An RNA of 177 nucleotides, treated with DMS and read out base by base. Source: RMDB library TTRINS, as collected in RNAgym. The reactions ran in a buffer of 150 mM KOAc, 10 mM MgCl2 and 150 mM bicine (pH 8.5), at 24 C.
RNA sequence: GGGAACGACUCGAGUAGAGUCGAAAAGAUAUGGAAGGAACUACUUCGGUAGUCGCGUUGAAAACCCAUGGAGGCUCGGAAACGAGCCUCCAUGGGUUGGAGCGAUGUACGAAGCCUUCCUAAGUCACACUAACACUUACUUCGGUAAGUGUUAGUGAAAAGAAACAACAACAACAAC
Reactivity to DMS in 0.01 (KOAc 150mM, MgCl2 10mM, bicine 150mM(pH8.5), 24C), signal-to-noise 1, nucleotides 027 to 126: g010a060u010a300u000g000g000a040a000g000g010a140a010c050u020a300c000u000u000c010g000g000u040a300g020u000c010g000c000g030u020u020g000a180a140a060a010c000c000c000a030u020g030g000a080g030g000c030u000c010g000g000a080a070a240c000g010a020g040c000c030u010c000c000a000u000g000g000g000u000u000g000g010a080g010c000g000a020u000g000u000a300c000g000a040a010g020c020c000u000u000c010c000u000a020a100g010u000c050a230